Structure probing data (2A3 and DMS) for a 177-nucleotide construct. The 2A3 profile rests on 2,452 reads. The reactions ran in a buffer of 150 mM KOAc, 10 mM MgCl2 and 150 mM bicine (pH 8.5), at 24 C. The DMS profile rests on 1,096 reads.
RNA sequence: GGGAACGACUCGAGUAGAGUCGAAAACUUUUUGCUGCUGAGACUUUACGUGCCACUGAAGAGGCGUCUAAGCAGUCUUAUGCUAUUGCCACCAUCAAAGAAAUUGUUGGUGAGCGCCAACUAUUACCACCUAUGGUAACUUCGGUUACCAUAGGUGAAAAGAAACAACAACAACAAC
Reactivity to 2A3 in 0.01 (KOAc 150mM, MgCl2 10mM, bicine 150mM(pH8.5), 24C), signal-to-noise 4, nucleotides 027 to 126: c000u070u060u050u150u240g010c030u010g000c000u010g010a000g010a040c020u030u170u180a080c140g070u130g020c000c010a080c090u140g090a110a010g050a100g100g020c010g010u010c010u020a020a020g020c010a000g020u010c000u040u110a160u110g040c020u050a060u140u260g000c010c010a010c000c000a000u030c030a030a040a050g140a130a250a160u070u030g010u000u020g020g010u010g040a030g030c000g000c000c020a050a040c030u130a060u190u080a020c020
Reactivity to DMS in 0.01 (KOAc 150mM, MgCl2 10mM, bicine 150mM(pH8.5), 24C), signal-to-noise 2, nucleotides 027 to 126: c040u000u020u010u010u000g000c000u000g000c000u000g010a100g020a070c020u000u000u030a150c280g010u000g020c010c010a150c100u040g040a150a100g000a060g010g010c020g010u000c020u000a100a020g000c040a020g000u000c090u000u000a040u000g000c060u000a110u010u010g020c040c000a010c000c020a020u000c010a010a070a230g010a090a070a200u000u000g040u010u000g000g010u000g010a110g000c050g030c150c170a020a080c110u000a100u000u000a130c200